RNA sequence: GGGAACGACUCGAGUAGAGUCGAAAAGCCGCAUUCUACACUACAACGCUAAGGCGAGGAAAUGUUCAUAGUGUAAGGAGAGCGGGAACUGGAAAACGCCUCGCUUUUUUCCUGUAAAACACCGCAAACAUACCUUGGGCUUCGGCCCAAGGUAUGUAAAAGAAACAACAACAACAAC
Reactivity to 2A3 in 0.01 (KOAc 150mM, MgCl2 10mM, bicine 150mM(pH8.5), 24C), signal-to-noise 1, nucleotides 027 to 126: g090c010c020g070c010a010u030u000c000u000a000c000a000c000u170a060c010a160a010c030g060c090u090a000a000g070g010c040g010a070g000g070a050a270a100u210g040u030u210c050a030u050a030g040u030g030u000a050a080g090g020a050g020a000g000c000g000g000g020a080a050c050u090g070g000a020a000a000a000c030g010c000c040u010c010g030c000u020u000u000u000u000u000c000c010u040g110u180a000a000a120a000c050a070c080c000g000c000a050a060
Reactivity to DMS in 0.01 (KOAc 150mM, MgCl2 10mM, bicine 150mM(pH8.5), 24C), signal-to-noise 1, nucleotides 027 to 126: g020c000c000g070c130a160u000u010c000u000a090c030a030c000u000a100c170a110a080c050g080c040u000a110a000g000g040c000g060a070g050g000a160a190a080u040g000u060u020c130a120u000a010g020u000g040u000a030a080g060g000a080g050a000g000c000g000g000g010a070a060c110u060g000g000a020a000a000a050c280g030c020c000u000c110g080c000u040u000u000u000u020u000c040c030u040g010u020a030a040a070a060c060a120c000c000g080c070a040a140